[RMDB]
RNA sequence: GGGAACGACUCGAGUAGAGUCGAAAAUGUCCCUCAAACAAAAACUCCUUUACACCUUCUAUGGUAAGGAGUCACUUGAGAACCCAACCUACAUUUACCACUCCGCAUUCAUUGAGUGUGGAAGUUGAGAGUUGUCCCUUCGGGGACAACAAAAGAAACAACAACAACAAC
Reactivity to DMS in 0.01 (KOAc 150mM, MgCl2 10mM, bicine 150mM(pH8.5), 24C), signal-to-noise 4, nucleotides 027 to 129: u060g020u040c040c080c030u080c000a060a080a100c080a020a040a000a040a000c000u000c010c000u050u010u020a080c200a040c070c060u050u080c130u070a080u120g030g010u000a050a030g050g010a000g030u080c140a030c150u010u020g020a040g020a080a130c020c010c030a130a190c060c060u000a040c090a110u080u120u110a120c130c060a000c050u010c000c020g010c030a060u070u020c000a110u040u110g000a030g000u070g010u000g000g050a020a080g000u050u000g020a090g010a170
Reactivity to 2A3 in 0.01 (KOAc 150mM, MgCl2 10mM, bicine 150mM(pH8.5), 24C), signal-to-noise 7, nucleotides 027 to 129: u120g050u010c020c000c020u000c060a170a170a070c030a020a120a000a000a000c010u040c000c000u060u120u160a090c120a050c050c000u160u250c120u280a140u300g020g010u000a000a000g000g000a000g000u000c010a000c030u010u010g020a040g000a080a020c000c000c000a050a030c030c030u160a110c070a280u120u180u150a060c040c020a010c000u000c000c000g000c000a000u030u020c020a050u120u300g000a020g010u010g000u000g010g000a040a060g050u040u090g020a030g010a000
Background:
Structure probing data (DMS and 2A3) for a 170-nucleotide construct. The reactions ran in a buffer of 150 mM KOAc, 10 mM MgCl2 and 150 mM bicine (pH 8.5), at 24 C. As a SHAPE reagent, 2A3 marks flexible, mostly unpaired nucleotides at the ribose 2'-OH. For DMS, 6,193 sequencing reads were counted. DMS (dimethyl sulfate) methylates the pairing face of unpaired adenines and cytosines.